An RNA of 177 nucleotides, treated with 2A3 and DMS and read out base by base. High 2A3 reactivity points to a flexible backbone, as in loops and unpaired stretches. The 2A3 profile rests on 890 reads. Values cover nucleotides 27 to 126. The reactions ran in a buffer of 150 mM KOAc, 10 mM MgCl2 and 150 mM bicine (pH 8.5), at 24 C.
[RMDB]
RNA sequence: GGGAACGACUCGAGUAGAGUCGAAAAGAAUCAGACAACCUGUGACCGUCACUGAGCUAGUAGAUUCUGGUAUAUUGAGACCGUCCACUGUCAAUGAACUGGAAUCUGGUCAGAUUUCUUAUGACGAUCAGGCAUAAAUCUUCGGAUUUAUGCCUGAAAAAGAAACAACAACAACAAC
Reactivity to 2A3 in 0.01 (KOAc 150mM, MgCl2 10mM, bicine 150mM(pH8.5), 24C), signal-to-noise 1, nucleotides 027 to 126: g040a000a070u100c020a000g070a100c020a040a070c010c050u100g010u050g190a180c050c040g040u030c000a010c070u060g000a000g090c010u060a050g100u010a030g210a060u000u000c010u010g030g020u050a070u000a010u090u060g040a020g060a050c000c040g120u070c020c050a100c060u160g070u060c010a010a030u070g020a100a130c000u010g010g000a000a000u000c020u030g030g030u030c020a060g000a110u100u260u050c060u000u140a090u130g000a020c050g050a030
Reactivity to DMS in 0.01 (KOAc 150mM, MgCl2 10mM, bicine 150mM(pH8.5), 24C), signal-to-noise 2, nucleotides 027 to 126: g000a120a080u010c050a060g010a100c050a080a130c060c030u010g010u010g000a100c060c040g010u000c030a100c080u000g000a070g010c020u000a060g010u000a020g010a020u000u000c020u010g000g010u010a070u010a070u000u010g000a070g000a120c100c070g000u000c080c060a110c150u000g000u010c000a010a030u000g000a070a020c020u010g000g010a030a030u000c010u000g030g000u000c110a020g020a070u000u000u010c020u000u000a080u000g000a050c100g020a120